Description: Conditions: 150 mM KOAc, 10 mM MgCl2 and 150 mM bicine (pH 8.5), 24 C. Chemical mapping of a 177-nucleotide RNA with DMS and 2A3. It was measured as part of the RMDB libraries RFM100 and RFMREP. For DMS the reverse transcriptase was MarathonRT.
RNA sequence: GGGAACGACUCGAGUAGAGUCGAAAACUGCCUUAGACAAAGAAUGCACUCGGAGCCCCAACACACCUAAAGCCAUGCUUUGAAGGAUCUGCCAAGCUCACUUUUAAUCAUGAGAAAGAAAUUACCCUAGUUAACAACGAUUCGUCGUUGUUAACUAAAAAGAAACAACAACAACAAC
Reactivity to DMS in 0.01 (KOAc 150mM, MgCl2 10mM, bicine 150mM(pH8.5), 24C), signal-to-noise 7, nucleotides 027 to 126: c050u010g000c040c030u010u000a100g010a110c120a060a100a110g010a080a060u010g010c050a040c040u000c070g010g010a110g010c030c020c020c030a090a080c100a050c100a050c050c040u000a060a070a110g000c040c050a050u020g000c040u000u000u010g010a090a070g010g000a040u000c030u000g020c040c050a050a090g010c080u010c030a050c040u000u000u000u010a060a110u010c110a060u010g000a080g010a050a050a070g010a050a050a060u020u010a130c020c010c030
Reactivity to 2A3 in 0.01 (KOAc 150mM, MgCl2 10mM, bicine 150mM(pH8.5), 24C), signal-to-noise 9, nucleotides 027 to 126: c040u070g030c010c000u100u080a070g030a060c050a010a130a020g080a130a090u110g010c010a010c020u020c030g030g030a020g030c000c000c010c010a050a020c050a000c000a010c040c020u090a070a020a000g000c020c020a050u110g000c020u060u040u090g050a070a020g040g010a040u010c020u050g050c020c010a040a020g010c010u020c010a080c010u070u080u050u120a090a080u060c040a050u100g050a010g080a070a090a010g080a010a120a050u100u090a130c010c000c000